[RMDB]
RNA sequence: GGGAACGACUCGAGUAGAGUCGAAAAAGCCUCAGGACAUCAGGUGUAUGGCCCAGAACCACCCAGGAGUGAAUGUGGACGAGUUGGGACAGAAAGUGAAGUGUGAUGUCAGCUCUGGUCUGGUGUGGCAUAGGACCACGUUCGCGUGGUCCUAUGCAAAAGAAACAACAACAACAAC
Reactivity to DMS in 0.01 (KOAc 150mM, MgCl2 10mM, bicine 150mM(pH8.5), 24C), signal-to-noise 1, nucleotides 027 to 126: a120g000c040c010u000c060a070g000g000a080c020a060u010c030a030g010g030u000g020u000a100u010g000g010c020c020c020a070g040a080a100c040c020a020c020c090c040a100g000g020a160g020u020g010a090a110u010g000u000g010g000a150c130g000a100g010u000u000g000g000g000a050c050a040g020a110a090a100g010u010g000a030a090g000u010g000u000g010a030u000g010u000c040a120g000c020u030c010u000g000g010u000c010u000g030g000u000g020u000g000
Reactivity to 2A3 in 0.01 (KOAc 150mM, MgCl2 10mM, bicine 150mM(pH8.5), 24C), signal-to-noise 1, nucleotides 027 to 126: a000g020c000c010u010c070a070g060g090a040c010a130u090c040a040g030g020u120g020u090a090u030g020g040c020c040c020a000g020a020a020c020c020a000c050c040c000a060g120g040a000g030u130g110a150a060u190g020u060g070g080a100c070g000a090g050u170u060g080g000g010a050c010a030g100a010a090a000g050u040g060a060a050g020u040g050u060g070a040u020g040u020c010a010g030c030u000c000u060g040g030u000c010u000g010g000u030g020u020g120